[RMDB]
RNA sequence: GGGAACGACUCGAGUAGAGUCGAAAAUAAAAAGAGGUCUUGUUUAAUUCACUCCUUGUUCUUCCGCCAGCUAGGUAUUAAACAUGCUUCAAAUGUUACUGUUCAACUAACUAGGAAGGGGUUUGAAAAUAAUACUGCUGUUCGCAGCAGUAUUAUUAAAAGAAACAACAACAACAAC
Reactivity to DMS in 0.01 (KOAc 150mM, MgCl2 10mM, bicine 150mM(pH8.5), 24C), signal-to-noise 3, nucleotides 027 to 126: u020a060a080a080a120a130g010a070g000g010u000c070u000u000g000u000u000u000a040a120u000u010c090a070c110u010c050c020u000u010g010u000u000c040u010u000c030c000g000c090c090a060g010c030u000a030g000g020u000a040u000u000a060a040a040c020a030u000g010c060u010u000c100a060a100a090u000g000u000u000a060c110u000g000u010u000c100a060a080c080u000a030a040c030u000a070g000g000a030a040g000g000g020g030u000u010u000g000a070a060
Reactivity to 2A3 in 0.01 (KOAc 150mM, MgCl2 10mM, bicine 150mM(pH8.5), 24C), signal-to-noise 2, nucleotides 027 to 126: u060a010a050a000a000a010g040a010g050g010u010c040u100u080g070u010u080u050a040a030u100u080c050a020c090u020c010c020u040u080g040u130u040c010u090u010c020c010g030c010c000a000g000c030u020a000g000g060u040a040u070u050a030a030a000c000a010u090g030c020u100u050c050a070a080a100u060g020u030u020a070c020u020g060u090u060c020a050a020c020u050a020a020c010u010a020g070g070a010a050g040g000g020g010u010u080u030g040a050a070
The data come from the RNA Mapping Database (RMDB), library OK2TRN. An RNA of 177 nucleotides, treated with DMS and 2A3 and read out base by base. The DMS profile rests on 3,165 reads. The reactions ran in a buffer of 150 mM KOAc, 10 mM MgCl2 and 150 mM bicine (pH 8.5), at 24 C. For 2A3 the reverse transcriptase was SuperScript II with manganese. For 2A3, 1,602 sequencing reads were counted.